The data come from the RNA Mapping Database (RMDB), library OK1LIB. Chemical mapping of a 177-nucleotide RNA with 2A3 and DMS. For 2A3, 11,394 sequencing reads were counted. The RNA was probed in 150 mM KOAc, 10 mM MgCl2 and 150 mM bicine (pH 8.5) at 24 C.

[RMDB]
RNA sequence: GGGAACGACUCGAGUAGAGUCGAAAAGAAGAGAAUAAAUAGAGGAGUCAGGGUUCGCACACGCUCCGCGAACCUACGGUAACACUGACUGUGGAGCGGAAAAGGCAGAUACCGAACUGCCAAAGAAACUAAUAAAUGCGUUCGCGCAUUUAUUAGUAAAAGAAACAACAACAACAAC
Reactivity to 2A3 in 0.01 (KOAc 150mM, MgCl2 10mM, bicine 150mM(pH8.5), 24C), signal-to-noise 7, nucleotides 027 to 126: g080a050a020g090a010g050a080a070u210a130a090a060u260a080g090a050g120g030a030g020u030c030a020g010g030g000u010u000c000g000c000a020c000a010c100g020c010u010c000c000g000c000g000a000a010c000c010u020a030c040g050g020u060a070a010c050a020c150u050g090a010c010u050g110u140g110g010a000g000c000g040g000a060a160a010a020g010g000c000a000g010a020u130a170c020c050g010a030a010c000u000g030c000c000a010a010a000g030a020a090
Reactivity to DMS in 0.01 (KOAc 150mM, MgCl2 10mM, bicine 150mM(pH8.5), 24C), signal-to-noise 5, nucleotides 027 to 126: g020a100a070g010a050g020a050a080u010a050a070a070u030a060g010a110g010g010a030g000u000c050a040g010g000g010u010u000c010g010c010a140c140a100c030g030c050u000c000c040g000c010g000a000a010c020c010u000a040c110g030g000u020a030a030c150a160c110u010g000a010c020u010g000u020g000g000a040g040c010g010g010a080a080a100a090g010g000c000a000g000a080u020a180c140c120g010a120a130c010u000g000c000c010a070a050a100g000a150a070

DMS adducts were read by reverse transcription with MarathonRT.